[RMDB]
An RNA of 177 nucleotides, treated with 2A3 and DMS and read out base by base. It was measured as part of the RMDB library OK2TRN. The RNA was probed in 150 mM KOAc, 10 mM MgCl2 and 150 mM bicine (pH 8.5) at 24 C. Reactivities are rounded to 0.1 and cut off at 0 and 3. The 2A3 profile rests on 2,625 reads.
RNA sequence: GGGAACGACUCGAGUAGAGUCGAAAAUAUGGCUUGGAAAACUAUGCUUUUGAGCACGUAGUCUAUGGAGACUUCUCUCAUACUACGUUAGGCGGUCUUCACUUGCUUAUUGGUUUAUACAAGAAGCCACUGCUACACGGUUCGCCGUGUAGCAGUGAAAAGAAACAACAACAACAAC
Reactivity to 2A3 in 0.01 (KOAc 150mM, MgCl2 10mM, bicine 150mM(pH8.5), 24C), signal-to-noise 3, nucleotides 027 to 126: u290a090u070g040g020c000u010u020g000g020a030a030a030a000c040u030a030u060g030c000u160u110u120u300g180a030g000c010a000c010g020u000a010g000u000c120u180a030u040g050g030a060g070a280c040u300u050c030u070c000u000c030a020u040a060c000u000a010c030g010u000u010a000g000g000c030g000g000u020c000u140u130c150a070c050u120u300g000c000u010u020a010u020u060g020g020u000u060u010a130u030a010c030a040a020g090a110a010g040c050
Reactivity to DMS in 0.01 (KOAc 150mM, MgCl2 10mM, bicine 150mM(pH8.5), 24C), signal-to-noise 3, nucleotides 027 to 126: u010a090u000g030g010c000u000u000g010g020a040a040a020a040c020u000a020u000g010c020u000u000u020u010g030a050g030c030a030c010g010u000a000g010u010c240u010a030u000g010g000a040g010a280c260u000u010c030u000c020u000c020a020u000a060c010u000a000c010g000u000u000a040g000g010c010g000g020u010c270u010u010c160a040c010u010u000g030c000u000u000a040u000u000g000g000u000u000u000a030u010a110c050a050a040g000a060a040g010c100